[RMDB]
RNA sequence: GGGAACGACUCGAGUAGAGUCGAAAAUCAGGCAUCCCAGACAGGAGGAAGUGUGUACUCACACCAGCCAGGAGGAAACAAGCCUGCCUGGGAGGACAGACGAUCAGCCCUGGCUGUCCCUCAGGAGCCUCAUACCAGUUUUCGAACUGGUAUGAGGAAAAGAAACAACAACAACAAC
Reactivity to DMS in 0.01 (KOAc 150mM, MgCl2 10mM, bicine 150mM(pH8.5), 24C), signal-to-noise 5, nucleotides 027 to 126: u010c040a010g000g010c040a120u000c010c010c010a180g010a180c140a110g020g010a070g000g020a210a080g030u000g010u010g000u030a120c220u020c020a030c000a110c000c020a090g000c040c020a080g000g010a090g000g010a080a090a040c160a140a120g000c050c000u010g000c020c000u010g000g000g000a070g000g000a040c020a020g000a070c050g000a090u010c120a080g010c070c020c030u000g000g000c010u010g000u000c010c000c010u000c020a050g000g000a140g020
Reactivity to 2A3 in 0.01 (KOAc 150mM, MgCl2 10mM, bicine 150mM(pH8.5), 24C), signal-to-noise 8, nucleotides 027 to 126: u110c000a000g040g000c010a050u040c000c000c000a020g090a050c060a030g030g070a030g040g080a140a120g020u020g010u010g020u160a100c070u080c110a020c010a020c010c000a020g070c010c000a040g020g050a060g020g060a080a080a070c070a100a040g030c000c000u030g040c010c000u010g010g010g010a150g010g010a010c000a010g030a030c040g050a100u140c070a020g060c000c010c010u020g040g000c000u010g000u010c010c000c000u010c000a010g030g030a040g030

Conditions: 150 mM KOAc, 10 mM MgCl2 and 150 mM bicine (pH 8.5), 24 C. Structure probing data (DMS and 2A3) for a 177-nucleotide construct. It was measured as part of the RMDB libraries RFM100 and RFMREP. 2A3 adducts were read by reverse transcription with SuperScript II with manganese. For DMS the reverse transcriptase was MarathonRT.